Structure probing data (2A3 and DMS) for a 177-nucleotide construct.

RNA sequence: GGGAACGACUCGAGUAGAGUCGAAAAACAUUCCGAGGGGACCGUACCCUCGGUAAUGGCGAAUGGGACCCAGAGCUCUCUCUAGAUUCCGAUAGAGAAUCGAGAGAAAACUGGCUCUCCCUUAGCCGGACAAUAGAAAGUUCGCUUUCUAUUGUCCAAAAGAAACAACAACAACAAC
Reactivity to 2A3 in 0.01 (KOAc 150mM, MgCl2 10mM, bicine 150mM(pH8.5), 24C), signal-to-noise 2, nucleotides 027 to 126: a000c020a080u110u000c010c000g000a000g030g000g020g050a100c030c120g130u220a060c030c000c000u000c000g010g000u010a010a060u110g020g000c020g010a030a010u040g000g010g000a030c060c030c030a010g000a020g020c000u000c000u020c000u000c030u100a070g020a030u030u000c010c020g260a270u150a250g210a030g000a040a000u020c010g000a000g000a010g000a010a010a000a000c000u000g000g020c010u020c000u010c020c000c000u020u020a010g000c030c010
Reactivity to DMS in 0.01 (KOAc 150mM, MgCl2 10mM, bicine 150mM(pH8.5), 24C), signal-to-noise 2, nucleotides 027 to 126: a070c080a140u000u000c000c000g020a030g000g010g000g000a180c200c210g000u010a150c020c020c000u000c000g000g000u000a000a020u000g000g020c000g020a180a040u000g000g000g020a060c250c000c020a010g000a100g000c300u000c050u000c000u000c010u000a080g020a000u000u000c000c000g020a200u000a090g010a100g000a010a000u000c010g000a010g000a000g000a010a030a260a160c000u000g010g000c010u000c070u000c010c000c000u000u000a300g000c000c050
Reactivities are given for positions 27 through 126. In probing experiments dimethyl sulfate is read out at A N1 and C N3, which are open when not base-paired.